[RMDB]
RNA sequence: GGGAACGACUCGAGUAGAGUCGAAAAAUGACUGGUAUCGUAAAAUGGUUCAACGCUGACAAAGGCUUCGGCUUCAUCACUCCUGACGAUGGCUCUAAAGACGUGUUCGUACACUUCUCUGCUAUCCUAGUUUUCAAGAGUUCGCUCUUGAAAACUAAAAAGAAACAACAACAACAAC
Reactivity to 2A3 in 0.01 (KOAc 150mM, MgCl2 10mM, bicine 150mM(pH8.5), 24C), signal-to-noise 5, nucleotides 027 to 126: a000u080g040a010c040u030g050g020u060a030u100c050g020u050a060a050a050a110u130g030g000u070u090c040a040a030c040g000c060u040g020a060c070a040a100a050g030g000c000u040u020c050g030g000c000u060u020c040a050u010c010a010c030u020c000c040u010g000a010c030g040a040u080g030g000c010u010c010u120a100a120a010g060a020c040g040u030g030u050u060c030g030u100a030c020a010c010u050u060c010u010c010u010g010c010u020a020u050c000c000
Reactivity to DMS in 0.01 (KOAc 150mM, MgCl2 10mM, bicine 150mM(pH8.5), 24C), signal-to-noise 4, nucleotides 027 to 126: a120u040g010a060c070u010g020g010u030a070u000c040g000u000a040a040a080a080u010g020g010u010u000c060a030a100c100g010c030u000g020a050c090a060a110a130g000g000c070u020u010c080g020g000c000u000u020c020a060u010c090a070c060u010c030c040u000g000a050c110g010a060u020g000g000c050u000c090u000a100a080a070g020a070c090g020u000g020u000u010c130g000u010a070c080a060c040u010u000c020u020c040u000g010c040u000a100u020c040c070
Chemical mapping of a 177-nucleotide RNA with 2A3 and DMS.
The RNA was probed in 150 mM KOAc, 10 mM MgCl2 and 150 mM bicine (pH 8.5) at 24 C.